[RMDB]
RNA sequence: GGGAACGACUCGAGUAGAGUCGAAAACUCCCGUUCGCGGGAGAAAAAAUCCUAAGUCAGCUCUUGGACCCGAUGUCGGAGCGACGAUCUAUCGGAAACGAUAGGGAGCUCCACAUCGGCUAGAGCUGAUAUGGAAAAAAAAGGGAUUCGUCCCUAACGCUAACAGGUUAUUCGUAACCUGUUAGCGAAAAGAAACAACAACAACAAC
Reactivity to 2A3 in 0.01 (KOAc 150mM, MgCl2 10mM, bicine 150mM(pH8.5), 24C), signal-to-noise 1, nucleotides 027 to 156: c000u000c000c000c000g000u060u010c210g050c040g020g050g010a000g000a240a050a000a000a020a020u050c010c000u020a090a000g000u010c000a000g020c000u000c010u110u110g090g160a240c040c020c010g000a000u000g010u080c300g030g000a000g010c000g040a130c000g000a000u030c000u000a000u010c000g060g050a170a040a040c010g000a000u000a000g010g010g000a000g000c010u010c000c000a030c010a000u000c000g000g000c000u000a000g000a000g000c000u000g000a000u000a000u000g000g170a020a060a010a020a000a080a020a020g010g030g010a040u160u080c200g040u080c090c040c050u090a160a030

Chemical mapping of a 207-nucleotide RNA with 2A3. Conditions: 150 mM KOAc, 10 mM MgCl2 and 150 mM bicine (pH 8.5), 24 C.